[RMDB]
RNA sequence: GGGAACGACUCGAGUAGAGUCGAAAACAGGCUCUGGUUGGAGAGUUGGUAUAAAAUGUGGACAACAGGGAAGGUGAGGGAUAGGAGAGUUGGGGUCAUCCUAUGUGGGUCUCCGAAGCCAGGCUGAACACACAUGUACUUUCGAGUACAUGUGUGUAAAAGAAACAACAACAACAAC
Reactivity to 2A3 in 0.01 (KOAc 150mM, MgCl2 10mM, bicine 150mM(pH8.5), 24C), signal-to-noise 2, nucleotides 027 to 126: c000a050g060g000c010u010c010u240g110g000u130u100g020g020a010g000a000g050u120u090g060g040u140a090u150a140a170a090a100u240g090u120g110g080a050c040a140a020c050a100g020g040g020a230a010g020g120u300g040a160g000g000g010a020u050a030g030g030a040g020a040g040u150u200g000g000g000g030u000c040a050u000c020c020u030a040u050g080u130g010g000g020u020c010u050c020c040g030a050a000g040c000c010a010g020g000c010u010g060a060
Reactivity to DMS in 0.01 (KOAc 150mM, MgCl2 10mM, bicine 150mM(pH8.5), 24C), signal-to-noise 3, nucleotides 027 to 126: c120a180g010g000c000u010c010u000g000g020u000u010g000g000a050g010a090g020u000u000g000g010u010a090u010a090a070a100a100u010g020u000g020g010a100c120a090a090c090a110g000g010g000a100a090g020g000u000g000a170g020g000g000a110u000a060g010g000a070g000a110g000u010u010g000g000g010g000u010c130a170u000c030c030u010a020u000g020u000g000g000g010u000c010u000c000c010g010a070a110g010c010c020a040g010g010c030u010g020a090
An RNA of 177 nucleotides, treated with 2A3 and DMS and read out base by base.
The data come from the RNA Mapping Database (RMDB), library OK2TRN.
DMS adducts were read by reverse transcription with MarathonRT.
The reactions ran in a buffer of 150 mM KOAc, 10 mM MgCl2 and 150 mM bicine (pH 8.5), at 24 C.
Values cover nucleotides 27 to 126.
2A3 is a SHAPE reagent: it acylates the 2'-hydroxyl of flexible nucleotides of all four kinds.
Reactivities are rounded to 0.1 and cut off at 0 and 3.
The DMS profile rests on 3,656 reads.